[RMDB]
RNA sequence: GGGAACGACUCGAGUAGAGUCGAAAACUUGGACAACAUUACUAACAGCAAAGUGUCAUAAAACUGCGAGGCGCAGCCCUUGGCUUGUUUAACCUUUUGUCACAGCAUCUAUACCAGGGAAUGCUGCAUUUCACCAGACAUUCGUGUCUGGUGAAAUAAAAGAAACAACAACAACAAC
Reactivity to DMS in 0.01 (KOAc 150mM, MgCl2 10mM, bicine 150mM(pH8.5), 24C), signal-to-noise 3, nucleotides 027 to 126: c060u000u020g000g010a040c060a070a060c050a050u030u030a070c070u000a100a110c170a130g020c110a020a060a040g010u020g020u000c090a090u020a050a040a060a090c090u000g000c040g020a070g020g010c040g010c080a070g000c060c030c000u010u010g010g010c050u000u000g000u000u000u000a090a090c120c020u030u000u010u000g000u000c150a150c020a030g000c010a020u000c040u010a060u020a180c100c140a110g010g000g000a030a040u000g020c010u000g010c170
Reactivity to 2A3 in 0.01 (KOAc 150mM, MgCl2 10mM, bicine 150mM(pH8.5), 24C), signal-to-noise 5, nucleotides 027 to 126: c010u040u080g090g000a000c020a080a000c020a120u040u120a070c080u100a120a040c020a040g000c030a050a080a030g020u050g020u040c020a050u120a160a100a030a050c010u050g020c020g030a050g100g000c070g000c060a040g000c000c020c000u030u030g070g000c010u050u100g030u060u050u070a060a070c000c020u050u070u070u120g050u050c050a020c000a090g010c000a010u000c020u080a080u090a190c040c040a060g070g040g000a050a070u040g020c000u020g000c010